[RMDB]
RNA sequence: GGGAACGACUCGAGUAGAGUCGAAAAUAAGAUUUAACCAGAGCAUCCCACUAUCCGGGAUAAUGGAUAGUCCCAGCUCUGAGGGUUAAGAAGGGCUAAACCUGUGAAUGAGUGAAGGGUGAAUAGCCAUUUUGGACAUGGGUUCGACUCCCAUAUGCAAUAAUAUCAAGUUCGCUUGAUAUUAUUGAAAAGAAACAACAACAACAAC
Reactivity to 2A3 in 0.01 (KOAc 150mM, MgCl2 10mM, bicine 150mM(pH8.5), 24C), signal-to-noise 5, nucleotides 027 to 156: u150a030a040g070a060u090u100u110a040a040c020c000a000g000a000g010c010a040u030c010c000c020a040c010u020a010u000c010c010g080g110g160a130u230a140a070u200g010g000a000u000a020g000u000c000c010c010a000g000c000u000c000u020g090a140g030g070g000u040u040a050a010g040a050a060g070g000g000c010u010a060a060a020c000c000u040g040u070g180a190a180u110g030a070g110u100g090a060a070g030g000g000u040g040a060a090u040a040g000c000c010a050u070u090u050u130g070g030a010c010a070u020g000g010g000u030u070c040g030a010c020u020c010c010c010a030u070a070u120g030
Reactivity to DMS in 0.01 (KOAc 150mM, MgCl2 10mM, bicine 150mM(pH8.5), 24C), signal-to-noise 4, nucleotides 027 to 156: u010a110a160g020a210u010u000u000a070a080c020c000a050g000a040g020c000a080u000c010c010c000a260c010u000a000u000c010c010g000g030g020a220u010a070a110u010g030g000a020u000a020g010u000c000c000c010a300g010c010u000c000u000g010a120g000g010g000u010u030a030a080g000a050a050g020g020g020c010u010a070a080a070c010c010u000g010u010g020a120a180u010g000a170g020u010g010a120a120g000g000g000u000g000a070a070u010a070g020c010c010a090u000u000u000u000g010g020a100c060a070u010g010g000g020u000u010c070g010a300c060u000c000c020c010a050u000a080u000g020